[RMDB]
The data come from the RNA Mapping Database (RMDB), library M2PK90. Structure probing data (DMS and 2A3) for a 177-nucleotide construct. In probing experiments dimethyl sulfate is read out at A N1 and C N3, which are open when not base-paired.

RNA sequence: GGGAACGACUCGAGUAGAGUCGAAAAAAGAAUGGGGGACUGGCUGCCCUGAUCAGAACAAACCCAUGACUAGCGUCGAAACAUCAACAGUGGGGGCUGUUGGUGUCGGCAGCCACUAGUCAAAGAAACUCACUAUGUGUUUCGACACAUAGUGAGUAAAAGAAACAACAACAACAAC
Reactivity to DMS in 0.01 (KOAc 150mM, MgCl2 10mM, bicine 150mM(pH8.5), 24C), signal-to-noise 4, nucleotides 027 to 126: a060a050g000a100a060u000g030g020g010g000g020a090c080u000g020g010c010u000g020c010c010c090u000g010a060u010c120a100g000a070a100c170a060a110a090c010c010c000a140u000g010a010c000u000a000g010c170g000u010c020g000a140a100a020c010a020u000c000a010a000c000a010g010u020g010g010g000g000g000c010u000g000u000u000g010g010u000g010u000c020g010g000c040a050g020c030c030a200c030u000a000g000u000c000a130a120a100g000a080a090
Reactivity to 2A3 in 0.01 (KOAc 150mM, MgCl2 10mM, bicine 150mM(pH8.5), 24C), signal-to-noise 3, nucleotides 027 to 126: a000a020g140a070a060u100g010g010g000g010g010a020c020u030g020g000c020u020g000c010c010c020u020g040a120u120c050a020g110a140a050c030a060a060a030c000c020c010a050u050g010a000c010u010a010g060c000g070u030c010g050a100a120a000c000a010u010c010a000a000c000a010g000u200g030g030g000g030g000c000u000g000u000u000g000g000u010g010u000c010g000g000c020a000g020c010c000a000c000u010a010g000u000c000a040a060a000g050a080a090
2A3 adducts were read by reverse transcription with SuperScript II with manganese. DMS adducts were read by reverse transcription with MarathonRT.